The data come from the RNA Mapping Database (RMDB), libraries RFM100 and RFMREP.
The record gives the reactivity of an RNA of 177 nucleotides to 2A3 and DMS.
The 2A3 profile rests on 2,472 reads.
2A3 adducts were read by reverse transcription with SuperScript II with manganese.
The RNA was probed in 150 mM KOAc, 10 mM MgCl2 and 150 mM bicine (pH 8.5) at 24 C.
Values cover nucleotides 27 to 126.
RNA sequence: GGGAACGACUCGAGUAGAGUCGAAAAUGGGAUCCGUCUUGUCAAUUCUGCCGGAUUGGCCGACAGUGAGAAAUCAUCGUGUUAGUCGAAGUGGUCUGGAACGGCCUGUCGUAGAGGGUGAGAGUCCCCGGUAGCAGAAAUUCGUUUCUGCUACCGGAAAAGAAACAACAACAACAAC
Reactivity to 2A3 in 0.01 (KOAc 150mM, MgCl2 10mM, bicine 150mM(pH8.5), 24C), signal-to-noise 4, nucleotides 027 to 126: u100g000g020g010a010u050c020c010g020u010c040u040u100g030u010c000a060a180u040u000c010u080g050c050c060g040g060a040u070u070g030g010c010c000g020a030c020a020g020u080g060a100g100a030a100a040u100c040a000u050c070g000u030g090u250u120a090g050u070c000g030a020a040g070u050g070g030u000c030u030g020g040a060a070c050g050g000c020c010u020g040u000c020g000u020a030g020a040g050g000g000u010g010a120g010a010g060u020c000c010
Reactivity to DMS in 0.01 (KOAc 150mM, MgCl2 10mM, bicine 150mM(pH8.5), 24C), signal-to-noise 3, nucleotides 027 to 126: u020g020g020g010a060u020c010c050g010u020c030u030u000g000u010c030a060a080u020u010c010u010g000c120c060g020g010a100u000u010g000g000c000c190g000a040c020a070g020u010g000a070g040a120a090a100u000c040a040u010c060g010u020g040u010u000a080g010u000c020g010a090a070g000u000g000g000u020c050u000g020g020a130a100c060g000g000c000c000u010g000u000c060g010u020a090g030a090g000g020g020u000g000a090g000a100g000u010c030c030